[RMDB]
RNA sequence: GGGAACGACUCGAGUAGAGUCGAAAACUAUAUUUCCGUCGUCGCGAUGAUCAUUGCCGCGGCGCUUGGCCUUGGCCUGUCGGUCAUGCUGCAAGCCAAUCGGCUAACCGCAGCGAUCGCACGCGUUACUGGAUGGCUGCUUCGGCAGCCAUCCAGUAAAAGAAACAACAACAACAAC
Reactivity to 2A3 in 0.01 (KOAc 150mM, MgCl2 10mM, bicine 150mM(pH8.5), 24C), signal-to-noise 1, nucleotides 027 to 126: c070u160a080u040a060u300u050u000c020c120g070u090c000g000u000c020g010c050g200a140u060g040a180u260c050a300u050u300g080c000c000g020c020g000g000c000g020c130u090u070g070g000c000c000u000u000g060g000c000c000u000g240u300c140g000g000u050c030a160u060g030c000u000g000c000a000a000g000c010c000a070a300u210c130g010g020c130u050a000a000c000c110g000c000a000g000c000g000a000u000c070g000c000a020c000g110c090g050u010u060